Structure probing data (DMS and 2A3) for a 177-nucleotide construct.
The RNA was probed in 150 mM KOAc, 10 mM MgCl2 and 150 mM bicine (pH 8.5) at 24 C.
DMS adducts were read by reverse transcription with MarathonRT.
The 2A3 profile rests on 814 reads.
2A3 adducts were read by reverse transcription with SuperScript II with manganese.

RNA sequence: GGGAACGACUCGAGUAGAGUCGAAAAGCUAUGGAUUAUGAAUUCUUGCGUGAUUUAACCGGGCAAGUACUCGUUAAAUUCUCCAUGGGGCAUGAAGUGAUCGGCCAUUGGCUGAAUGAAGAGAUCAACCCACUGGUAAUUUCGAUUACCAGUGGGUAAAAGAAACAACAACAACAAC
Reactivity to DMS in 0.01 (KOAc 150mM, MgCl2 10mM, bicine 150mM(pH8.5), 24C), signal-to-noise 2, nucleotides 027 to 126: g010c020u000a010u000g000g000a080u010u000a040u000g020a030a110u000u000c010u000u010g010c060g010u010g020a100u010u000u010a070a130c230c070g000g000g030c030a050a040g010u000a060c040u010c050g020u010u000a060a050a090u020u000c110u000c040c020a040u010g000g000g010g030c110a040u000g000a080a060g010u010g010a040u010c020g010g010c040c000a120u010u000g020g020c030u000g000a000a090u030g000a090a110g010a110g000a060u000c040a060
Reactivity to 2A3 in 0.01 (KOAc 150mM, MgCl2 10mM, bicine 150mM(pH8.5), 24C), signal-to-noise 1, nucleotides 027 to 126: g070c020u040a040u040g030g010a050u040u040a050u240g110a060a110u030u040c000u010u040g020c080g300u050g100a160u020u080u190a070a050c090c120g040g000g000c020a120a000g000u030a040c000u010c010g080u030u110a010a210a130u200u060c040u000c000c020a020u040g000g040g040g030c040a010u120g060a060a050g120u030g140a050u040c020g060g000c040c030a120u050u120g050g000c040u050g030a010a120u070g000a090a020g080a000g000a050u020c000a000